[RMDB]
RNA sequence: GGGAACGACUCGAGUAGAGUCGAAAAUCUCCAUAGACAUAGGCUCUCUCUUAAGGAGUUGAUGAUGUAUGCCGCUGAUCCAGCCAUGCACAUUGCCUCCUCUAACGCUUUUCUUGAUUUGAGGACAUACGUGGGCGGUUCGCCGCCCACAAAAGAAACAACAACAACAAC
Reactivity to 2A3 in 0.01 (KOAc 150mM, MgCl2 10mM, bicine 150mM(pH8.5), 24C), signal-to-noise 4, nucleotides 027 to 129: u010c010u010c000c030a090u090a040g110a040c050a050u190a060g040g010c010u000c000u000c000u000c000u120u120a070a030g000g000a010g000u000u000g000a000u000g040a000u020g000u000a020u000g060c070c080g030c080u030g030a260u150c090c000a030g000c000c000a000u010g030c020a000c000a030u000u040g000c000c000u010c000c000u040c030u060a020a000c040g090c060u050u100u060u050c030u030u110g080a130u020u050u180g030a010g020g030a010c000a090u080a040c040
Reactivity to DMS in 0.01 (KOAc 150mM, MgCl2 10mM, bicine 150mM(pH8.5), 24C), signal-to-noise 2, nucleotides 027 to 129: u020c000u010c000c050a080u000a020g030a090c210a060u040a020g020g020c100u030c000u000c010u030c050u060u000a080a030g060g000a020g010u000u090g030a040u030g000a170u000g000u000a060u040g040c100c100g050c050u270g040a150u060c170c050a000g050c010c010a070u050g020c000a030c040a110u000u000g000c300c000u000c000c000u020c050u040a180a080c180g020c030u010u010u040u050c140u070u050g050a080u060u000u050g080a030g040g030a060c050a100u020a000c110
The record gives the reactivity of an RNA of 170 nucleotides to 2A3 and DMS. For 2A3, 4,268 sequencing reads were counted. The RNA was probed in 150 mM KOAc, 10 mM MgCl2 and 150 mM bicine (pH 8.5) at 24 C. For DMS the reverse transcriptase was MarathonRT. It was measured as part of the RMDB library 15KLIB.